An RNA of 177 nucleotides, treated with DMS and 2A3 and read out base by base. For 2A3, 10,240 sequencing reads were counted. For DMS the reverse transcriptase was MarathonRT.
RNA sequence: GGGAACGACUCGAGUAGAGUCGAAAAGGUCGAGGUACGUAAGUGUCUGAGUUGGGAGCAUUACCGUGUUAGCCGUAUAGUUCAGCGACACCAGCUAUAGUAGUAGAUUAACUAGACGCAAAGUCAAGGGUAAUUCUUUCUUCGGAAAGAAUUGCCCAAAAGAAACAACAACAACAAC
Reactivity to DMS in 0.01 (KOAc 150mM, MgCl2 10mM, bicine 150mM(pH8.5), 24C), signal-to-noise 8, nucleotides 027 to 126: g000g020u010c040g000a040g010g000u000a030c060g010u030a100a070g010u010g010u010c030u010g010a090g010u000u000g010g000g000a070g010c090a070u010u020a090c080c090g010u010g010u010u010a090g010c030c030g010u020a070u020a060g010u010u020c070a070g000c080g000a060c060a100c070c080a080g000c040u010a080u010a040g010u010a050g010u010a060g000a110u030u030a040a050c050u000a050g000a040c070g000c080a050a070a100g000u020c080a100a140
Reactivity to 2A3 in 0.01 (KOAc 150mM, MgCl2 10mM, bicine 150mM(pH8.5), 24C), signal-to-noise 8, nucleotides 027 to 126: g060g010u080c040g030a030g020g040u100a050c040g020u060a050a100g040u030g020u070c030u040g040a030g070u090u100g020g020g010a030g030c030a050u030u120a070c020c020g020u020g030u080u050a040g020c010c000g020u050a060u070a110g070u050u080c030a010g020c010g030a010c020a040c030c030a010g000c030u030a020u050a120g050u010a020g040u010a030g030a170u080u080a060a040c030u030a050g020a030c040g020c100a120a060a010g040u060c050a050a080